This 207-nucleotide RNA was probed chemically with 2A3 and DMS. High 2A3 reactivity points to a flexible backbone, as in loops and unpaired stretches. Source: RMDB library OK3TST, as collected in RNAgym. The reactions ran in a buffer of 150 mM KOAc, 10 mM MgCl2 and 150 mM bicine (pH 8.5), at 24 C.
[RMDB]
RNA sequence: GGGAACGACUCGAGUAGAGUCGAAAAUUUUUCUUUCUCAUUUGCUUUCCAUAGAGAGUGUGGAAGAAAAGGGAGGAGGCCCUCCACGGUGCAGCAUCACUGAACUGCUUCAGAUGUGCUGGCCCAGCCUAAGCGAGGACUGUGUUGCCAGCCACACAUAAAUCCUUCCUUUCGAGGAAGGAUUUAUAAAAGAAACAACAACAACAAC
Reactivity to 2A3 in 0.01 (KOAc 150mM, MgCl2 10mM, bicine 150mM(pH8.5), 24C), signal-to-noise 3, nucleotides 027 to 156: u070u040u000u000u000c000u000u000u010c010u010c010a030u080u060u150g060c020u100u150u070c150c020a170u160a080g060a030g010a030g100u010g000u000g020g000a010a000g000a010a040a000a020g030g000g010a010g030g030a050g070g060c040c020c000u010c020c010a030c040g060g000u040g000c010a010g000c000a060u300c020a190c100u080g100a270a170c000u060g050c000u130u110c080a080g040a300u000g040u060g000c000u000g030g010c030c000c000a010g000c020c010u140a230a040g100c070g130a030g010g010a130c000u020g020u030g020u170u130g050c000c000a020g000c000c010a000c000a000c000
Reactivity to DMS in 0.01 (KOAc 150mM, MgCl2 10mM, bicine 150mM(pH8.5), 24C), signal-to-noise 1, nucleotides 027 to 156: u010u010u000u020u000c020u000u000u000c000u030c000a090u000u020u010g020c020u000u000u010c170c120a140u000a030g000a100g000a030g050u000g020u000g000g000a030a010g000a030a010a030a070g010g040g010a090g010g030a160g010g030c000c010c020u000c040c030a140c140g000g000u000g030c050a040g020c050a090u000c050a040c030u000g000a030a140c260u000g000c060u000u000c020a070g030a100u000g040u000g010c030u000g030g000c030c010c020a030g020c000c020u000a110a240g020c200g020a130g020g020a010c000u000g010u000g020u000u010g010c000c010a090g000c030c010a020c040a060c110